[RMDB]
RNA sequence: GGGAACGACUCGAGUAGAGUCGAAAAGAGGAUUGUCGAGUUCGAGCACCGCACGGUAUCGCCCGACGAUCUGCCGCCGAAAGCUGCGAAGCAGCUCGGCCGGCCGCUGACCGAUUUCGAGUGGUUCGAGUUCACAGGAGUGGCCCGCCGUGCCUAGUGACUCUCUGUAAUUCGUUACAGAGAGUCAAAAAGAAACAACAACAACAAC
Reactivity to 2A3 in 0.01 (KOAc 150mM, MgCl2 10mM, bicine 150mM(pH8.5), 24C), signal-to-noise 1, nucleotides 027 to 156: g200a030g040g000a020u000u000g030u020c030g020a030g070u150u250c000g020a020g050c060a030c050c050g150c120a110c160g010g030u030a020u020c020g000c020c000c000g000a000c000g000a000u000c020u050g010c010c000g010c000c000g060a090a080a060g040c050u050g000c100g120a300a100g000c040a000g000c010u000c000g030g000c070c050g010g010c000c010g000c040u050g010a020c010c010g030a080u040u070u040c020g010a010g020u140g000g090u120u000c010g000a040g040u080u060c030a050c050a090g060g040a050g060u070g030g020c080c000c020g110c050c030g040u050g020c000c010u060a070g060